[RMDB]
RNA sequence: GGGAACGACUCGAGUAGAGUCGAAAAUAGUCCCGCACCGCGUGAGGCAGGAAACUGAGCAGCGAAAAGGGGCAGCUGCGGACGGCACAAGGAUCGCAUGCUUGAGGGAGUGGCAUGGCCACCCGAGACCUCGGUUGUUUUUCGAAACAACCGAGGUAAAAGAAACAACAACAACAAC
Reactivity to 2A3 in 0.01 (KOAc 150mM, MgCl2 10mM, bicine 150mM(pH8.5), 24C), signal-to-noise 2, nucleotides 027 to 126: u150a020g100u060c000c030c010g000c020a050c030c140g020c020g040u080g030a050g030g040c040a010g040g030a090a000a000c010u010g020a000g010c020a000g000c060g000a000a050a130a010g010g000g020g000c060a000g000c000u020g000c020g010g000a040c050g060g050c050a010c000a110a000g040g000a030u020c010g040c080a010u030g050c060u150u070g130a130g000g050g000a110g040u010g010g010c180a200u150g130g000c000c000a030c010c000c000g040a050g010
Reactivity to DMS in 0.01 (KOAc 150mM, MgCl2 10mM, bicine 150mM(pH8.5), 24C), signal-to-noise 2, nucleotides 027 to 126: u000a070g000u000c010c000c000g010c090a120c030c030g020c040g050u000g000a210g010g040c000a000g000g010a070a140a130c040u000g000a180g000c000a080g000c040g020a030a030a180a040g000g000g010g000c070a080g010c090u040g000c000g000g000a060c050g000g050c020a090c080a090a060g030g000a100u000c010g030c010a090u020g010c010u000u000g000a090g000g000g000a030g000u030g000g020c030a200u010g030g010c060c000a090c000c000c020g000a130g000

Chemical mapping of a 177-nucleotide RNA with 2A3 and DMS. It was measured as part of the RMDB library RFM100. Reactivities are rounded to 0.1 and cut off at 0 and 3.